The data come from the RNA Mapping Database (RMDB), library OK2TST. An RNA of 177 nucleotides, treated with DMS and 2A3 and read out base by base. The reactions ran in a buffer of 150 mM KOAc, 10 mM MgCl2 and 150 mM bicine (pH 8.5), at 24 C.
RNA sequence: GGGAACGACUCGAGUAGAGUCGAAAAUGUCGGAGAUAGAGAUUCCUGCAUACAAAAAGCGAGAGUCUAAGAGGCCAACAGCAAUGCUCAGCUAUGUGCACUUGGAUGGAAACACAAAAUCAGGGCAGCCGUGCAUAAGAUUCGUCUUAUGCACGGCAAAAGAAACAACAACAACAAC
Reactivity to DMS in 0.01 (KOAc 150mM, MgCl2 10mM, bicine 150mM(pH8.5), 24C), signal-to-noise 1, nucleotides 027 to 126: u000g030u000c140g000g000a080g020a060u000a170g010a000g030a060u000u000c000c000u000g000c060a090u000a120c150a180a100a080a100a100g040c000g000a060g000a020g000u000c010u000a040a080g030a230g000g000c020c030a060a020c110a040g020c030a040a130u030g010c030u010c020a110g010c000u010a030u020g010u000g010c060a050c130u010u000g030g010a120u000g010g000a080a040a050c050a010c070a040a010a080a020u030c100a100g040g000g000c150a100
Reactivity to 2A3 in 0.01 (KOAc 150mM, MgCl2 10mM, bicine 150mM(pH8.5), 24C), signal-to-noise 1, nucleotides 027 to 126: u070g040u020c010g000g050a060g020a060u100a070g120a020g020a100u040u070c000c000u000g000c020a020u140a190c050a020a130a060a060a000g050c040g020a090g020a020g030u010c000u030a070a000g080a080g010g060c000c000a030a020c020a050g030c000a030a070u080g020c000u020c050a000g020c010u040a040u140g070u100g000c010a020c120u030u050g030g040a080u100g020g050a110a090a000c010a010c020a100a070a020a070u170c060a030g000g070g000c000a000